Description: The record gives the reactivity of an RNA of 177 nucleotides to 2A3 and DMS. 2A3 adducts were read by reverse transcription with SuperScript II with manganese. For DMS the reverse transcriptase was MarathonRT. Values cover nucleotides 27 to 126.
[RMDB]
RNA sequence: GGGAACGACUCGAGUAGAGUCGAAAAGCGUUAACAAUAGAGGUGUUAUGGUGUCCACCCAGCACACGGUGGAAGAGGGUUGGCAGGCAGGGGGUUGCGGAGAAUCCCAUACACGGGCACUGUGUGCUCAACCACCAUCUUUCGAGAUGGUGGUUGAAAAAGAAACAACAACAACAAC
Reactivity to 2A3 in 0.01 (KOAc 150mM, MgCl2 10mM, bicine 150mM(pH8.5), 24C), signal-to-noise 4, nucleotides 027 to 126: g050c050g020u100u110a080a060c060a110a110u130a120g070a050g010g030u040g030u120u110a140u140g050g030u040g030u070c010c000a010c010c010c000a000g020c030a010c000a000c010g010g010u020g030g050a040a050g060a150g070g020g000u130u110g020g020c060a020g020g010c030a030g050g010g000g000g020u030u050g010c020g000g010a010g020a060a020u030c030c000c010a020u090a050c130a030c040g000g020g000c030a020c090u040g000u010g000u010g030c000
Reactivity to DMS in 0.01 (KOAc 150mM, MgCl2 10mM, bicine 150mM(pH8.5), 24C), signal-to-noise 5, nucleotides 027 to 126: g000c050g000u010u020a080a090c100a060a120u020a080g000a100g030g010u010g010u010u010a080u030g010g000u010g010u010c020c020a030c010c000c100a130g000c020a040c000a030c040g000g030u000g010g020a040a070g000a180g000g010g010u000u030g000g010c130a080g000g010c090a130g000g010g000g020g020u010u020g010c040g000g000a100g000a080a070u010c000c000c010a130u020a070c150a080c130g000g000g000c110a030c090u010g010u010g010u010g000c020